[RMDB]
Structure probing data (2A3 and DMS) for a 177-nucleotide construct.

RNA sequence: GGGAACGACUCGAGUAGAGUCGAAAAGACAACACCAUCAUCGUGGUGAUCUCCGACAACGGCGCCAGCGGCGAGGGCGGACCCAACGGAUCGGUCAACGAAGGCAAGUUCUUCAACGGCUACAUCGGCCUAACUCCUAUUUCGAUAGGAGUUAGGCAAAAGAAACAACAACAACAAC
Reactivity to 2A3 in 0.01 (KOAc 150mM, MgCl2 10mM, bicine 150mM(pH8.5), 24C), signal-to-noise 2, nucleotides 027 to 126: g060a030c060a060a000c010a080c020c010a010u110c020a060u090c150g100u020g010g060u040g070a100u020c030u010c030c000g010a040c020a150a030c050g110g040c010g000c000c030a070g040c000g060g000c020g010a040g000g000g000c000g000g030a030c000c000c010a010a050c020g050g020a080u090c030g020g020u040c020a010a020c100g010a010a010g010g000c130a170a060g060u090u000c010u040u020c020a040a020c060g000g000c000u080a050c040a110u140c060g120
Reactivity to DMS in 0.01 (KOAc 150mM, MgCl2 10mM, bicine 150mM(pH8.5), 24C), signal-to-noise 3, nucleotides 027 to 126: g000a140c210a120a120c010a010c010c000a080u000c150a120u030c210g030u000g010g010u000g010a040u000c010u010c010c010g000a070c140a100a100c050g000g020c000g010c050c060a060g020c080g010g010c060g010a050g020g010g020c050g040g000a110c030c010c020a110a090c080g000g000a040u020c090g000g010u000c020a100a160c230g010a060a040g010g000c040a070a100g020u000u000c020u010u000c040a070a240c100g000g020c030u000a020c180a060u000c110g030
For 2A3, 2,848 sequencing reads were counted. For DMS, 1,730 sequencing reads were counted.